[RMDB]
RNA sequence: GGGAACGACUCGAGUAGAGUCGAAAAAGUGGAGGCCAUCGGGGAGGGUCCCGCUGCUGGUCCUGGUGGGGAGGCUGAGCACGUCCUGCUGCUCUGGGCUCUCCUGGGACCCAGGUGCACCCCAUCCACUUUCCUUAAAAUUCGUUUUAAGGAAAGUAAAAGAAACAACAACAACAAC
Reactivity to DMS in 0.01 (KOAc 150mM, MgCl2 10mM, bicine 150mM(pH8.5), 24C), signal-to-noise 9, nucleotides 027 to 126: a060g020u000g000g010a100g010g010c050c040a060u010c090g000g010g010g010a180g010g000g010u000c020c010c020g020c040u000g010c090u010g010g000u000c010c010u010g020g030u000g010g010g010g000a030g000g000c010u000g000a020g010c010a030c060g000u010c170c150u010g020c190u000g010c010u000c010u010g020g000g000c010u000c000u000c010c020u000g000g000g010a030c030c010c050a010g010g010u010g010c110a160c030c000c010c040a160u010c090c080
Reactivity to 2A3 in 0.01 (KOAc 150mM, MgCl2 10mM, bicine 150mM(pH8.5), 24C), signal-to-noise 6, nucleotides 027 to 126: a000g060u070g000g040a070g030g040c030c020a070u100c100g030g010g000g030a060g030g030g020u040c010c010c010g040c020u060g030c050u050g010g010u020c010c000u120g080g080u110g030g030g010g000a010g080g030c020u010g000a000g000c000a010c040g090u220c050c080u110g040c110u010g000c000u010c030u040g020g050g070c000u010c010u000c000c000u000g000g000g000a010c020c010c000a020g030g020u080g020c020a090c000c000c000c010a030u040c020c000